About this RNA
Conditions: 150 mM KOAc, 10 mM MgCl2 and 150 mM bicine (pH 8.5), 24 C. The record gives the reactivity of an RNA of 207 nucleotides to 2A3 and DMS. High 2A3 reactivity points to a flexible backbone, as in loops and unpaired stretches. For 2A3 the reverse transcriptase was SuperScript II with manganese.

RNA sequence: GGGAACGACUCGAGUAGAGUCGAAAAGGGGCUGACAGGAAUCGACAGUAGACUGUAUCAUGUCAGUAAGCAUGCCGGGGAAUGGUGGUUUACCCCGUUAUCAAAUGAUUACCGACCAAUAAUUGGCUUAGCUCGUUGGGCUUCGGCCCAACGAGAAUGGUUUAAGGAGUUUCGACUCCUUAAACCAAAAAGAAACAACAACAACAAC
Reactivity to 2A3 in 0.01 (KOAc 150mM, MgCl2 10mM, bicine 150mM(pH8.5), 24C), signal-to-noise 2, nucleotides 027 to 156: g050g010g040g000c000u000g020a000c010a020g040g040a100a070u180c100g090a060c010a010g140u290a050g080a200c000u030g000u030a050u050c030a040u020g000u000c010a020g080u100a090a000g070c050a020u110g070c020c000g000g000g020g000a010a000u070g000g020u010g000g070u000u040u040a030c020c020c000c000g010u000u030a000u030c030a000a040a040u060g030a010u070u030a030c030c000g090a110c010c020a010a080u300a180a060u100u040g010g040c040u090u120a020g020c000u010c000g000u000u000g010g000g010c000u050u030c180g040g010c000c010c000a000a000c000g000a000g000a000a000
Reactivity to DMS in 0.01 (KOAc 150mM, MgCl2 10mM, bicine 150mM(pH8.5), 24C), signal-to-noise 1, nucleotides 027 to 156: g000g020g000g030c020u000g020a070c000a150g000g000a100a070u000c010g020a080c000a090g000u000a110g010a200c010u010g000u000a290u000c040a070u000g000u000c010a030g010u000a100a120g040c010a070u000g010c090c000g000g000g030g030a090a100u000g010g010u000g000g020u000u000u000a150c010c000c000c010g040u010u000a090u020c300a110a090a070u000g030a150u000u000a020c000c000g000a050c020c010a060a210u000a050a140u010u010g020g010c040u000u010a140g010c000u000c010g030u020u010g010g010g000c010u000u010c260g020g010c030c010c010a000a020c000g020a010g010a020a040